[RMDB]
This 177-nucleotide RNA was probed chemically with 2A3 and DMS. The reactions ran in a buffer of 150 mM KOAc, 10 mM MgCl2 and 150 mM bicine (pH 8.5), at 24 C. High 2A3 reactivity points to a flexible backbone, as in loops and unpaired stretches. Values cover nucleotides 27 to 126.
RNA sequence: GGGAACGACUCGAGUAGAGUCGAAAAACGUGCGUUACGACGCACGACUCUGUCCCGCUCAUCCUGUUGUUCCAAUAUUCCAACAGCCCAGUGAUUAUUGAGCAAUGCGCAUGUGCGGGACAGAUAAGUCAGCAAGUUAAUUCGUUAACUUGCUGACAAAAGAAACAACAACAACAAC
Reactivity to 2A3 in 0.01 (KOAc 150mM, MgCl2 10mM, bicine 150mM(pH8.5), 24C), signal-to-noise 6, nucleotides 027 to 126: a000c020g000u010g020c000g010u020u050a120c300g020a000c000g050c000a000c000g030a030c020u000c000u010g000u000c000c000c000g000c010u020c000a010u020c010c040u050g010u030u000g010u030u000c090c010a010a000u010a020u030u020c040c020a060a050c050a290g070c040c040c020a090g020u110g120a010u010u020a000u010u010g000a000g010c000a000a020u070g030c070g000c080a000u010g010u010g000c000g000g000g000a000c000a000g000a000u010a020a010
Reactivity to DMS in 0.01 (KOAc 150mM, MgCl2 10mM, bicine 150mM(pH8.5), 24C), signal-to-noise 4, nucleotides 027 to 126: a090c000g030u000g010c010g010u000u000a110c220g020a040c000g010c000a000c000g000a060c150u000c010u000g000u010c000c000c000g000c000u000c010a020u000c120c050u020g020u000u000g010u000u010c140c100a000a010u000a010u010u020c020c050a140a120c120a180g000c070c100c040a090g010u030g010a010u000u000a000u000u000g000a020g010c020a000a000u000g010c300g010c270a010u000g000u000g000c000g000g020g000a000c000a000g000a010u020a040a110